Source: RMDB library OK1LIB, as collected in RNAgym. An RNA of 177 nucleotides, treated with DMS and 2A3 and read out base by base. Reactivities are given for positions 27 through 126.
[RMDB]
RNA sequence: GGGAACGACUCGAGUAGAGUCGAAAAAUUAAAGGUGGACGUGGAGAAUAUUCCAAGGCUCCUGAGCUCCUCUGGUCCCAGUGGUUCGAUUUUGGACCGUUCAAAAUUGGACCGAAUGGACUCCUGCUAGUUGAACGGAUUUCGAUCCGUUCAACUAAAAAGAAACAACAACAACAAC
Reactivity to DMS in 0.01 (KOAc 150mM, MgCl2 10mM, bicine 150mM(pH8.5), 24C), signal-to-noise 2, nucleotides 027 to 126: a080u030u120a080a090a060g020g030u010g010g010a040c040g010u010g010g010a010g010a070a080u010a110u040u010c150c110a170a060g030g010c000u010c020c000u000g010a210g000c130u010c010c010u000c080u000g000g010u010c020c000c110a110g020u030g000g000u000u000c000g010a030u010u000u000u000g030g000a200c240c160g000u010u030c000a010a010a010a000u000u000g010g010a000c000c000g020a090a090u040g010g000a040c080u000c060c020u010g000c130
Reactivity to 2A3 in 0.01 (KOAc 150mM, MgCl2 10mM, bicine 150mM(pH8.5), 24C), signal-to-noise 3, nucleotides 027 to 126: a000u230u190a080a030a010g090g000u060g000g030a060c060g060u010g040g040a060g000a050a140u090a100u230u110c090c040a000a060g040g000c000u000c000c000u030g060a050g020c040u000c010c040u000c050u050g020g010u040c000c000c000a040g040u100g080g020u010u010c000g020a080u020u000u000u030g050g020a150c070c110g020u080u000c060a020a000a030a020u010u010g000g010a020c000c020g000a020a050u050g000g020a010c000u020c000c010u080g060c040
The RNA was probed in 150 mM KOAc, 10 mM MgCl2 and 150 mM bicine (pH 8.5) at 24 C.